[RMDB]
RNA sequence: GGGAACGACUCGAGUAGAGUCGAAAAGACAGCGAGUGUGGCCAAGGUGACAGCUGCACGCCCGGAGCCAAGCGCGGCGUGGGCUGAAGCCCGGCGGCGGGUACGCCAACGCCGCGAGGACAUGCUGUAAAGCGAAUGAAUUCGUUCAUUCGCUUUAAAAAGAAACAACAACAACAAC
Reactivity to 2A3 in 0.01 (KOAc 150mM, MgCl2 10mM, bicine 150mM(pH8.5), 24C), signal-to-noise 2, nucleotides 027 to 126: g080a000c010a000g010c030g020a070g040u040g000u030g030g010c020c030a120a090g160g030u140g050a060c040a020g030c020u080g020c020a010c010g010c000c000c000g040g030a080g010c020c020a120a040g170c000g010c010g020g000c000g000u010g000g010g000c010u020g030a070a020g020c000c000c010g060g020c050g090g140c000g000g000g000u060a030c050g000c000c000a010a000c000g000c000c020g000c010g000a010g000g010a000c010a030u070g000c010u020g050
Reactivity to DMS in 0.01 (KOAc 150mM, MgCl2 10mM, bicine 150mM(pH8.5), 24C), signal-to-noise 9, nucleotides 027 to 126: g010a110c020a020g010c020g010a100g010u000g020u000g000g000c000c050a160a120g000g010u020g010a140c130a140g010c010u000g000c030a030c010g000c010c000c010g010g010a150g000c020c020a110a120g010c000g010c030g000g000c000g040u000g010g000g000c000u010g010a120a180g000c000c000c010g000g020c270g010g000c020g000g000g010u010a090c160g000c020c000a050a020c010g000c000c000g010c000g010a030g000g010a060c070a070u020g000c020u000g010

Structure probing data (2A3 and DMS) for a 177-nucleotide construct. The RNA was probed in 150 mM KOAc, 10 mM MgCl2 and 150 mM bicine (pH 8.5) at 24 C.